[RMDB]
RNA sequence: GGGAACGACUCGAGUAGAGUCGAAAAGAUAUGGACUAGAACUACGACGUGUACUUCGAAGAACAGGAUUGUACUCGGAAACGAGUACAAUCCUGGGAGAAGUACUGAAGUCGCUAGUCCUAAGUCACAUGUCUCAUGACUUCGGUCAUGAGACAUGAAAAGAAACAACAACAACAAC
Reactivity to DMS in 0.01 (KOAc 150mM, MgCl2 10mM, bicine 150mM(pH8.5), 24C), signal-to-noise 1, nucleotides 027 to 126: g040a020u010a290u010g000g000a010c010u000a030g010a090a040c130u010a290c050g000a040c020g000u010g020u010a000c000u000u000c000g000a150a200g010a300a190c020a010g000g000a010u000u010g030u000a000c000u010c030g000g000a080a080a220c000g000a000g000u000a000c000a000a010u000c000c000u000g020g000g000a190g010a010a000g010u000a010c000u000g000a110a200g000u000c010g020c220u000a030g000u000c010c000u000a020a040g000u000c030a070
Description:
This 177-nucleotide RNA was probed chemically with DMS. Reactivities are given for positions 27 through 126. Source: RMDB library TTRINS, as collected in RNAgym. For DMS the reverse transcriptase was MarathonRT. Reactivities are rounded to 0.1 and cut off at 0 and 3.